[RMDB]
The data come from the RNA Mapping Database (RMDB), library OK1LIB. An RNA of 177 nucleotides, treated with 2A3 and DMS and read out base by base. For 2A3, 5,166 sequencing reads were counted. As a SHAPE reagent, 2A3 marks flexible, mostly unpaired nucleotides at the ribose 2'-OH. The RNA was probed in 150 mM KOAc, 10 mM MgCl2 and 150 mM bicine (pH 8.5) at 24 C. In probing experiments dimethyl sulfate is read out at A N1 and C N3, which are open when not base-paired. The DMS profile rests on 13,977 reads. DMS adducts were read by reverse transcription with MarathonRT.

RNA sequence: GGGAACGACUCGAGUAGAGUCGAAAAAUCUCAGCAGCGAAGAAGCAAAAGUGACGGUGGCUGCAGAGGAAGCGCCGGCUAACUACGUGCUAGCAGCCACGGUAAUACGUAGGGCGCAAGCGCAAUCAAUUUUAUUUAAAUUCGUUUAAAUAAAAUUAAAAGAAACAACAACAACAAC
Reactivity to 2A3 in 0.01 (KOAc 150mM, MgCl2 10mM, bicine 150mM(pH8.5), 24C), signal-to-noise 2, nucleotides 027 to 126: a000u000c000u000c000a020g000c010a000g000c000g020a070a010g030a060a000g060c030a010a030a070a080g080u040g030a030c030g030g000u010g030g000c000u000g000c020a000g020a020g000g090a070a030g000c000g000c010c000g030g000c050u030a050a000c010u020a010c050g010u040g030c010u040a020g010c000a000g000c000c040a000c000g000g000u050a040a010u070a030c010g010u020a010g000g030g000c000g000c010a040a030g030c020g000c030a000a060u050c020
Reactivity to DMS in 0.01 (KOAc 150mM, MgCl2 10mM, bicine 150mM(pH8.5), 24C), signal-to-noise 6, nucleotides 027 to 126: a100u010c000u000c000a110g020c080a080g020c030g000a160a070g000a080a140g000c040a060a070a090a070g010u020g020a110c050g010g030u010g000g000c000u000g000c000a070g010a180g000g020a090a090g000c010g010c010c140g000g000c070u030a140a300c020u010a000c040g020u000g000c060u010a110g000c000a030g030c030c020a020c010g000g000u010a050a040u030a030c020g010u000a010g000g000g010c050g020c030a080a080g020c060g000c100a100a090u040c070